[RMDB]
RNA sequence: GGGAACGACUCGAGUAGAGUCGAAAAUGCACCGACGGCCGGCGGGGUCGUCACUUCGGGCGUGGGCGUUGCCGGGGUCGGCGUGGGGUUGCUGGGCAUGUUUGGACCGGUGCGUGUAGUGCACGUCCCAUGACGCGUGGUUCGCCACGCGUCAUGGAAAAGAAACAACAACAACAAC
Reactivity to 2A3 in 0.01 (KOAc 150mM, MgCl2 10mM, bicine 150mM(pH8.5), 24C), signal-to-noise 2, nucleotides 027 to 126: u060g020c050a060c010c140g060a040c020g000g000c020c000g160g120c040g000g080g000g010u000c000g030u010c000a000c100u130u060c010g060g000g000c120g000u100g000g020g000c110g000u010u070g070c050c000g000g000g050g000u030c060g020g000c160g000u150g000g000g010g020u170u180g000c090u170g000g000g000c050a070u050g100u040u140u300g040g000a090c060c020g060g000u080g020c090g000u030g040u040a170g020u080g040c060a050c020g030u010c040
Reactivity to DMS in 0.01 (KOAc 150mM, MgCl2 10mM, bicine 150mM(pH8.5), 24C), signal-to-noise 1, nucleotides 027 to 126: u000g010c180a130c040c020g040a050c000g010g000c020c020g090g010c230g030g000g010g040u010c090g060u000c010a030c170u000u070c210g000g010g000c100g050u000g000g000g020c130g030u000u030g000c050c120g000g000g000g000u000c030g030g010c090g030u010g010g010g000g000u050u010g000c040u000g020g000g000c080a060u040g000u010u000u000g000g060a170c000c080g000g010u000g010c040g030u020g010u000a060g000u040g000c010a030c030g030u030c050